RNA sequence: GGGAACGACUCGAGUAGAGUCGAAAAGCUGUGAAUAGGUAAGCCUAUAUCUGUUCGCACUACAGGCACUAUGACGCAACAUGGUCCCUGUGAACUCGAAGCUUGUUGCGUCAAGUUUUGAGUGAUCUCAGAAACUAUAGGCUUAGUUCUUGAGAGCCGAGAGCAGUAUGUUCGCAUACUGCUUUCGAAAAGAAACAACAACAACAAC
Reactivity to DMS in 0.01 (KOAc 150mM, MgCl2 10mM, bicine 150mM(pH8.5), 24C), signal-to-noise 6, nucleotides 027 to 156: g020c060u000g040u000g000a060a020u000a020g020g010u000a030a060g010c030c020u000a050u000a010u000c010u000g020u000u000c020g020c030a070c050u000a130c040a050g010g020c080a070c030u000a060u010g010a130c160g030c300a130a220c010a040u000g020g010u000c050c010c010u040g010u000g010a080a070c030u000c030g010a040a050g020c030u010u000g020u000u000g020c120g000u000c040a030a060g010u000u000u000u010g010a100g020u000g010a070u000c020u000c020a100g000a050a040a050c080u000a030u000a050g010g000c030u000u000a050g020u010u000c010u000u000g000a080g000a100g020c100
Reactivity to 2A3 in 0.01 (KOAc 150mM, MgCl2 10mM, bicine 150mM(pH8.5), 24C), signal-to-noise 9, nucleotides 027 to 156: g040c110u020g010u020g080a040a010u030a050g030g000u020a040a010g000c010c010u000a010u010a010u050c000u000g020u020u040c040g000c010a010c020u120a050c020a030g020g020c040a010c040u080a080u150g050a050c070g030c130a050a030c000a050u040g030g020u070c020c010c030u030g030u040g080a080a030c010u020c060g030a050a020g020c010u020u010g020u040u110g080c060g080u050c010a010a000g000u000u010u040u040g030a020g000u030g080a090u010c030u000c030a020g070a050a090a030c060u040a010u000a020g000g000c000u020u040a030g020u080u010c020u060u150g060a140g010a020g080c030